[RMDB]
RNA sequence: GGGAACGACUCGAGUAGAGUCGAAAACAUCCGGUAUCCCAAGACAAUCUUCGGGUUGGGUUGGGAAGUAUCAUGGCUAAUCACCAUGAUGCAAUCGGGUUGAACACUUAAUUGGGUUAAAACGGUGGGGGACGAUCCCGUAACAUCCGUCCUAACGCAAUCACAAUACCUUCGGGUAUUGUGAUUGAAAAGAAACAACAACAACAAC
Reactivity to 2A3 in 0.01 (KOAc 150mM, MgCl2 10mM, bicine 150mM(pH8.5), 24C), signal-to-noise 3, nucleotides 027 to 156: c050a030u010c000c010g040g010u070a030u050c000c020c000a010a020g120a040c020a010a060u040c030u100u110c230g120g030g060u060u050g120g060g140u060u120g010g020g000a030a020g000u000a000u010c000a000u000g000g000c010u030a030a010u040c000a000c010c000a000u000g000a000u000g000c000a000a070u140c040g010g000g000u030u070g040a110a020c030a020c110u100u130a120a100u240u120g030g020g010u100u180a060a070a040a020c010g030g000u070g020g070g020g000g000a000c060g020a040u120c040c020c000g020u050a040a040c040a070u020c040c010g050u010c000c010u020a060a010c050g000
Reactivity to DMS in 0.01 (KOAc 150mM, MgCl2 10mM, bicine 150mM(pH8.5), 24C), signal-to-noise 2, nucleotides 027 to 156: c060a050u000c030c020g040g030u000a190u010c000c000c010a040a040g020a110c080a070a050u000c030u000u020c270g020g020g020u000u010g000g010g020u000u010g020g030g020a050a140g030u000a000u000c000a030u000g030g020c000u010a220a210u010c120a040c000c000a030u000g000a010u000g000c000a170a100u000c020g000g020g010u000u000g020a060a090c130a050c090u000u000a060a140u010u010g000g000g040u010u010a020a070a090a080c030g010g030u000g000g000g020g020g000a050c030g000a120u010c000c000c020g000u000a070a060c060a070u000c050c020g020u000c000c020u000a060a060c140g030